[RMDB]
RNA sequence: GGGAACGACUCGAGUAGAGUCGAAAAGGCUUUGGCGUGAGGGCAGCUUUCUCGACGGGCUGGGCCCGCAACUGGUCACCGCGCACGAGUCGCUGGUGGUGGCCGUCGACCGGGCCGACGUCGCCGAUAAAACAAAUAGCUUCGGCUAUUUGUUUUAAAAAGAAACAACAACAACAAC
Reactivity to DMS in 0.01 (KOAc 150mM, MgCl2 10mM, bicine 150mM(pH8.5), 24C), signal-to-noise 8, nucleotides 027 to 126: g010g010c040u010u020u010g000g000c030g010u010g010a090g010g000g000c040a050g000c050u000u010u000c040u010c030g000a060c040g000g000g010c050u010g010g010g030c000c000c010g010c070a070a060c090u030g030g020u000c010a020c000c000g010c020g010c050a100c080g000a170g000u030c110g020c100u020g010g020u000g000g020u000g010g000c000c000g000u010c050g010a220c300c020g000g000g010c010c000g000a040c040g010u010c030g010c100c050g010a160
Reactivity to 2A3 in 0.01 (KOAc 150mM, MgCl2 10mM, bicine 150mM(pH8.5), 24C), signal-to-noise 8, nucleotides 027 to 126: g060g010c040u120u120u130g030g000c050g030u090g040a110g010g050g020c010a030g010c010u040u100u030c070u040c030g070a070c020g000g040g090c070u160g090g030g000c000c010c000g000c010a020a030c060u160g010g000u010c010a000c010c010g010c020g110c030a030c090g110a080g230u240c070g040c130u060g060g030u020g000g000u000g000g000c000c000g010u030c020g010a070c060c010g000g000g000c010c010g000a010c000g000u020c010g010c040c020g080a100

This 177-nucleotide RNA was probed chemically with DMS and 2A3. The 2A3 profile rests on 10,270 reads. Reactivities are rounded to 0.1 and cut off at 0 and 3. Conditions: 150 mM KOAc, 10 mM MgCl2 and 150 mM bicine (pH 8.5), 24 C.